[RMDB]
RNA sequence: GGGAACGACUCGAGUAGAGUCGAAAAAACGCAGUCGGCGCAACCCGUCGCUCCGCGAACUGGUGAGGUGCGAAGUGGAUACCGGUUCAAGGGAGGGAACCCUGCCGACCAGAAUAAUUGGGAGAAGCGUGCAUAGCAUCUUCGGAUGCUAUGCACGAAAAGAAACAACAACAACAAC
Reactivity to 2A3 in 0.01 (KOAc 150mM, MgCl2 10mM, bicine 150mM(pH8.5), 24C), signal-to-noise 1, nucleotides 027 to 126: a020a000c140g000c060a050g040u020c010g040g000c010g020c010a030a060c010c030c050g060u090c050g040c060u020c020c010g060c050g000a010a010c010u000g070g000u040g100a120g000g120u150g080c120g070a210a000g020u080g230g030a040u040a110c010c020g000g000u000u040c000a020a020g150g000g010a030g020g000g000a010a050c010c020c010u010g000c000c000g000a000c000c010a000g100a090a040u180a180a090u210u180g020g030g010a080g060a090a000g080
Reactivity to DMS in 0.01 (KOAc 150mM, MgCl2 10mM, bicine 150mM(pH8.5), 24C), signal-to-noise 1, nucleotides 027 to 126: a030a020c140g000c040a100g000u010c000g000g020c000g010c090a120a150c070c000c010g000u000c060g000c040u010c000c010g000c300g000a040a040c000u000g000g030u010g000a110g030g030u010g050c030g090a110a110g010u010g000g000a190u030a040c010c020g060g040u000u000c040a100a300g000g000g000a070g030g010g000a070a140c040c010c060u000g030c030c010g000a060c000c130a040g010a040a020u000a050a220u010u000g000g010g020a240g000a120a100g000